[RMDB]
RNA sequence: GGGAACGACUCGAGUAGAGUCGAAAACAAUACUUGACUAUGUGAUCUUGCCUUCGUAAUAUCAUUCUGUACAUAAUAGUCGAAAGUAUUGCUAUAGUUAAGAGAAUGUACAGACUUAAGAGUACAAGCCUGGAGCGAUGUUCGCAUCGCUCCAGGCAAAAGAAACAACAACAACAAC
Reactivity to 2A3 in 0.01 (KOAc 150mM, MgCl2 10mM, bicine 150mM(pH8.5), 24C), signal-to-noise 1, nucleotides 027 to 126: c000a000a000u150a020c000u140u210g110a000c000u000a000u000g250u000g040a070u010c020u000u000g000c030c000u120u150c130g000u000a050a000u050a030u160c050a000u000u100c000u160g040u070a000c000a130u050a070a000u000a000g000u000c000g090a020a000a000g000u000a000u130u000g080c000u070a080u160a200g160u050u160a070a000g080a100g070a260a120u000g000u000a000c000a020g000a000c000u220u300a030a000g030a050g000u000a070c000a160a000

This 177-nucleotide RNA was probed chemically with 2A3. The 2A3 profile rests on 393 reads.